[RMDB]
RNA sequence: GGGAACGACUCGAGUAGAGUCGAAAAAAUUUAGAAAUCUGACCCCUGGGAACACUAACACCCGUGUGUCCCGUUACACUAGCACAGCCCGGCACCGCCUGCGCCGUGGUGCCGACGGGACAGCUGACAUUCCAUAUCCCUUCGGGGAUAUGGAAUGAAAAGAAACAACAACAACAAC
Reactivity to DMS in 0.01 (KOAc 150mM, MgCl2 10mM, bicine 150mM(pH8.5), 24C), signal-to-noise 1, nucleotides 027 to 126: a050a130u030u000u010a140g000a060a190a090u000c050u000g020a270c100c040c020c090u000g000g000g000a080a050c120a010c120u030a040a070c140a060c000c030c000g010u000g010u010g020u000c000c000c000g020u000u000a050c180a110c100u000a050g010c120a040c060a070g000c010c100c030g000g000c000a020c010c010g050c040c010u000g000c170g000c190c130g000u030g010g010u000g030c000c000g000a060c070g000g020g000a040c030a050g020c040u000g000a280